RNA sequence: GGGAACGACUCGAGUAGAGUCGAAAAAUGAUCACCCCGUCCGAUGCGGAAGUUCGUGCUUCCGUCGAACGCGAAAGUCGGACGGCGGCCAUGAGUCGCAACGCAAAGCCGCGGCAAGUGGACUUAGAAAAGCGUUUGAAGUUCGCUUCAAACGCAAUCUGUGUGGAAACUUCGGUUUCCACACAGAAAAAGAAACAACAACAACAAC
Reactivity to 2A3 in 0.01 (KOAc 150mM, MgCl2 10mM, bicine 150mM(pH8.5), 24C), signal-to-noise 1, nucleotides 027 to 156: a010u140g030a060u120c110a100c000c000c000c000g000u040c010c000g010a010u050g010c010g010g000a020a000g000u100u270c120g230u300g040c000u020u000c000c000g000u000c010g010a190a120c050g020c050g150a160a050a000g000u000c020g000g000a000c020g010g000c030g020g000c000c000a010u040g010a000g020u000c000g010c020a050a080c060g000c220a070a130a080g060c050c020g000c030g000g020c020a000a070g010u010g010g060a060c010u010u040a070g070a070a070a000a010g000c000g000u000u000u000g010a000a000g000u010u090c090g000c090u000u060c000a000a000a000c000g030c000a000a000